[RMDB]
RNA sequence: GGGAACGACUCGAGUAGAGUCGAAAAGAGCGUUUGCAAGAGGCGAUCCGUAAUCUUGGGCAGGUGCAGGCGGAAUUCGAUGCGAAACAGGCUGAAUUUGAUGAGGAGUUAGCCUCACGUAUUGCGAUGCUCGCAACUUAUUCGUAAGUUGCGAGCAAAAAGAAACAACAACAACAAC
Reactivity to DMS in 0.01 (KOAc 150mM, MgCl2 10mM, bicine 150mM(pH8.5), 24C), signal-to-noise 2, nucleotides 027 to 126: g010a080g000c000g030u000u010u030g040c050a070a100g000a050g010g010c040g000a080u000c020c020g030u000a190a110u020c020u000u040g020g010g000c000a030g020g020u000g010c050a110g000g000c040g000g000a060a170u010u000c050g010a100u000g020c040g000a070a110a140c110a070g010g000c010u000g000a040a080u010u000u000g000a070u000g030a130g000g010a040g010u000u010a110g000c010c000u000c020a100c120g010u000a220u000u000g000c030g000a090
Reactivity to 2A3 in 0.01 (KOAc 150mM, MgCl2 10mM, bicine 150mM(pH8.5), 24C), signal-to-noise 1, nucleotides 027 to 126: g100a010g070c090g000u080u090u210g000c040a070a000g020a010g130g000c000g030a050u000c030c000g050u080a000a050u000c020u070u110g010g010g010c030a000g030g000u060g040c020a050g140g070c080g020g020a070a040u160u100c030g040a040u110g050c010g080a000a100a070c020a010g070g070c000u040g030a130a040u190u090u060g070a090u080g020a000g000g000a020g070u070u040a030g020c000c020u020c000a040c020g070u090a130u090u070g000c090g020a020